[RMDB]
RNA sequence: GGGAACGACUCGAGUAGAGUCGAAAAGAUAUGGAUAGAGGUGUGAUGACCACCACCGCUUCGGAAACGAAGCGAAGACUGCAAGCAUUCUCUAUCCUAAGUCAAAACGCUAACUUCGGUUAGCGAACACUGCUUAUACGUUCGCGUAUAAGCAGUGAAAAGAAACAACAACAACAAC
Reactivity to 2A3 in 0.01 (KOAc 150mM, MgCl2 10mM, bicine 150mM(pH8.5), 24C), signal-to-noise 5, nucleotides 027 to 126: g000a010u040a010u070g010g010a010u010a000g010a000g000g030u010g030u030g080a300u190g100a100c040c070a060c040c000a010c080c020g000c000u010u000c010g010g000a020a020a040c000g000a000a010g000c000g000a010a010g080a050c150u160g030c160a180a180g020c000a040u300u220c020u000c000u020a000u000c010c000u000a040a000g000u010c010a040a050a040a130c030g000c000u000a010a010c000u060u040c220g120g000u000u000a010g000c000g000a010a000
Reactivity to DMS in 0.01 (KOAc 150mM, MgCl2 10mM, bicine 150mM(pH8.5), 24C), signal-to-noise 5, nucleotides 027 to 126: g000a040u000a250u000g000g000a030u000a020g010a030g010g050u010g000u010g020a130u010g000a100c300c050a210c140c080a050c180c030g000c000u000u000c000g010g010a040a070a120c000g010a010a000g020c000g000a040a050g000a090c300u000g040c070a040a270g000c020a020u000u000c000u000c010u000a000u000c000c010u000a020a090g000u000c030a060a040a080a120c010g010c000u000a000a000c000u000u010c180g020g000u000u000a000g020c000g000a050a070